The record gives the reactivity of an RNA of 177 nucleotides to 2A3 and DMS. For DMS the reverse transcriptase was MarathonRT. The 2A3 profile rests on 5,368 reads. It was measured as part of the RMDB library OK1LIB. The reactions ran in a buffer of 150 mM KOAc, 10 mM MgCl2 and 150 mM bicine (pH 8.5), at 24 C. For 2A3 the reverse transcriptase was SuperScript II with manganese.
RNA sequence: GGGAACGACUCGAGUAGAGUCGAAAAUGCUACCUGGAUGGAGCAGCUUGCGGGCUAUUGGACAUGACCAGAGACACUUCAUCGAACUCUGGCUGAAGUAUUGGGUAAUCUAUGCACUGCUGCAGGGCCAGUGCGAUAUGUUCGCAUAUCGCACUGGAAAAGAAACAACAACAACAAC
Reactivity to 2A3 in 0.01 (KOAc 150mM, MgCl2 10mM, bicine 150mM(pH8.5), 24C), signal-to-noise 6, nucleotides 027 to 126: u110g020c020u090a150c000c000u010g060g010a090u060g050g030a030g030c020a010g020c040u060u090g010c040g020g020g000c030u080a090u070u110g070g040a020c070a090u120g070a230c010c010a010g010a000g030a050c020a040c130u130u150c050a180u140c080g040a080a060c010u000c000u030g030g000c020u020g020a060a020g040u080a100u140u110g060g000g010u070a070a060u010c040u060a060u170g010c010a010c030u040g000c020u050g000c020a040g000g030g000
Reactivity to DMS in 0.01 (KOAc 150mM, MgCl2 10mM, bicine 150mM(pH8.5), 24C), signal-to-noise 3, nucleotides 027 to 126: u070g020c030u000a040c020c020u000g000g000a110u010g030g010a070g000c020a050g000c100u020u020g000c070g000g000g050c050u030a050u020u000g000g020a150c100a070u000g000a140c000c000a000g000a030g000a110c200a100c110u010u030c190a050u010c140g000a070a100c010u000c020u000g000g010c050u000g000a080a100g010u000a120u030u000g020g020g000u030a070a030u020c050u010a100u020g020c010a090c040u030g000c040u000g000c010a100g000g000g010